[RMDB]
RNA sequence: GGGAACGACUCGAGUAGAGUCGAAAACCAUUUUUACUGAAAAAGUCAAUUUUUUCCAAUUUUAACGGGUUGCAGAUCUCUGACACCUGGAUUUCUGCGAAAAUUAUCGAUUUUUCCGAAAAAUUUAGAUUAAAUACCCAUUCGUGGGUAUUUAAUCAAAAGAAACAACAACAACAAC
Reactivity to 2A3 in 0.01 (KOAc 150mM, MgCl2 10mM, bicine 150mM(pH8.5), 24C), signal-to-noise 3, nucleotides 027 to 126: c000c000a000u020u020u010u030u040a150c020u030g030a030a010a030a010a030g070u030c010a040a050u000u000u040u020u020u000c020c010a050a060u040u070u070u100a180a050c030g020g000g070u120u210g020c000a020g020a290u050c220u030c020u190g080a130c030a040c010c010u020g030g000a010u020u070u120c120u090g020c060g100a000a010a020a030u150u050a070u080c020g000a010u000u010u000u020u020c010c000g050a080a000a000a030a020u090u300u290a090